An RNA of 207 nucleotides, treated with 2A3 and DMS and read out base by base. Values cover nucleotides 27 to 156. Conditions: 150 mM KOAc, 10 mM MgCl2 and 150 mM bicine (pH 8.5), 24 C. The data come from the RNA Mapping Database (RMDB), library M2RFOK.

RNA sequence: GGGAACGACUCGAGUAGAGUCGAAAAAUCCUCAGGUUCAUAAGCGUGAUGAUUGGGUGUUCAUGCUCCAUGAAUGACAUGUGCCUCCUUUGAACCUUGUUACGACCUUGGCACAUUACCCAUCUGAAAAAGACGUUCGCGUUCGCGCGAACGUCAAUCAUCACAGAUACUUCGGUAUCUGUGAUGAAAAAGAAACAACAACAACAAC
Reactivity to 2A3 in 0.01 (KOAc 150mM, MgCl2 10mM, bicine 150mM(pH8.5), 24C), signal-to-noise 3, nucleotides 027 to 156: a000u030c000c000u010c010a000g010g000u000u000c010a020u070a250a030g040c100g090u120g090a090u100g020a030u130u240g040g000g000u070g030u020u020c020a020u020g050c130u140c210c050a020u030g040a010a010u100g050a040c020a090u020g000u000g000c000c010u040c000c000u020u040u020g000a000a010c000c000u010u140g090u060u120a090c120g060a120c020c090u040u090g000g010c000a010c020a000u010u070a030c000c000c000a010u010c050u100g100a100a050a020a040a080g010a010c010g000u000u000c010g020c020g030u010u060c180g010c010g000c000g120a000a000c000g000u000c010a000a000
Reactivity to DMS in 0.01 (KOAc 150mM, MgCl2 10mM, bicine 150mM(pH8.5), 24C), signal-to-noise 1, nucleotides 027 to 156: a110u000c020c010u000c040a030g010g020u000u010c000a050u000a070a040g020c110g080u000g010a120u000g020a110u000u020g060g030g010u000g030u010u020c040a040u000g000c170u000c120c090a080u000g010a060a070u000g020a080c140a300u000g000u000g030c010c030u020c050c020u000u010u010g020a070a040c000c000u020u010g020u010u010a140c100g040a070c070c040u000u010g020g100c000a050c050a090u010u000a080c020c000c020a110u000c050u000g000a130a050a110a140a270g000a030c030g030u000u010c020g050c000g060u010u020c300g100c090g030c000g020a000a010c020g020u000c000a010a020